RNA sequence: GGGAACGACUCGAGUAGAGUCGAAAAGCUUGAAUUGCGUUUCGUAGGUUACGUCUACGUUAAAACGUUACAGUUAAAUAUAACUGCUAAAAACGAAAACAACUCUUACGCUUUAGCUGCCUAAAAACAGUUAGCGUAGAUCCUCUCGGCAUCGCCCCUAUGGUUUAGGCUUCGGCCUAAACCAUAGAAAAGAAACAACAACAACAAC
Reactivity to DMS in 0.01 (KOAc 150mM, MgCl2 10mM, bicine 150mM(pH8.5), 24C), signal-to-noise 1, nucleotides 027 to 156: g010c060u000u010g040a100a100u010u010g050c000g030u000u000u000c020g010u020a050g040g020u020u010a050c200g020u010c010u000a060c020g000u010u030a090a080a060a100c050g000u020u000a030c020a060g000u000u000a020a220a170u000a100u000a020a050c000u010g040c050u010a030a050a090a090a090c020g010a070a060a120a120c050a020a030c020u000c020u000u000a010c000g010c020u000u000u010a000g040c020u000g010c000c040u000a090a110a060a020a030c000a010g020u000u000a030g000c000g050u010a020g000a070u000c040c010u000c030u000c040g050g000c020a020u000c010g030c050c020c010
Reactivity to 2A3 in 0.01 (KOAc 150mM, MgCl2 10mM, bicine 150mM(pH8.5), 24C), signal-to-noise 6, nucleotides 027 to 156: g040c040u170u180g060a070a050u210u130g050c040g020u030u030u050c010g000u000a020g020g040u110u120a070c100g030u030c010u000a010c010g050u030u090a030a060a000a010c010g010u020u030a010c000a020g000u020u050a060a300a090u220a100u040a150a010c010u030g020c070u120a100a110a000a010a040c060g070a030a040a060a040c080a050a070c020u020c020u140u100a010c010g010c000u120u150u080a010g000c010u010g010c000c020u090a070a030a010a000a010c020a010g010u030u020a000g000c000g000u000a010g000a020u030c020c040u040c010u020c000g000g000c010a060u080c060g020c000c010c000